The record gives the reactivity of an RNA of 207 nucleotides to DMS and 2A3. The 2A3 profile rests on 1,867 reads. For DMS the reverse transcriptase was MarathonRT. The RNA was probed in 150 mM KOAc, 10 mM MgCl2 and 150 mM bicine (pH 8.5) at 24 C. Values are in units of 0.01, from 0 to 300, in steps of 10. For 2A3 the reverse transcriptase was SuperScript II with manganese.
RNA sequence: GGGAACGACUCGAGUAGAGUCGAAAAUAGUUUGGGUAAUUAACGCAUUUAUUUUGUGUGUACAUAGUUACAACAGUGUUUUAGCUGUUAUAUUACUAGUACUCUAUUGCUAUGCGUCAUUGGUUACAAGUCGCAAUACUGUUAUAAUAAUGCAUUGGCUAGUAGUGGUUUUCGAACCACUACUAGCAAAAGAAACAACAACAACAAC
Reactivity to DMS in 0.01 (KOAc 150mM, MgCl2 10mM, bicine 150mM(pH8.5), 24C), signal-to-noise 1, nucleotides 027 to 156: u020a090g000u000u020u000g010g020g000u000a040a090u000u000a050a050c030g020c010a040u000u000u000a130u020u010u000u000g030u000g020u000g000u000a040c010a220u010a040g010u010u000a040c030a000a010c000a010g010u000g010u020u000u030u040a210g020c010u000g020u010u000a150u000a030u000u000a040c020u000a020g000u000a010c030u020c020u010a050u000u000g000c120u000a050u000g020c080g040u000c020a100u020u000g040g000u000u000a140c030a090a080g030u000c080g000c090a050a090u000a080c030u000g010u010u000a050u000a050a080u000a050a110u010g010c030a080u000u000g000
Reactivity to 2A3 in 0.01 (KOAc 150mM, MgCl2 10mM, bicine 150mM(pH8.5), 24C), signal-to-noise 4, nucleotides 027 to 156: u140a020g060u040u080u060g070g000g010u080a080a120u110u060a080a030c000g020c000a000u070u130u040a190u020u140u280u040g100u000g010u000g000u010a010c030a100u020a040g000u000u010a010c010a050a000c000a010g000u000g110u090u140u130u300a020g020c000u000g000u010u000a070u000a000u080u070a010c000u000a000g000u000a000c000u000c010u050a100u050u050g010c030u020a010u050g010c000g010u020c100a090u020u070g040g000u060u040a030c000a040a030g030u000c020g020c040a000a060u040a130c030u070g060u140u050a070u020a130a060u070a030a040u100g020c050a050u030u190g040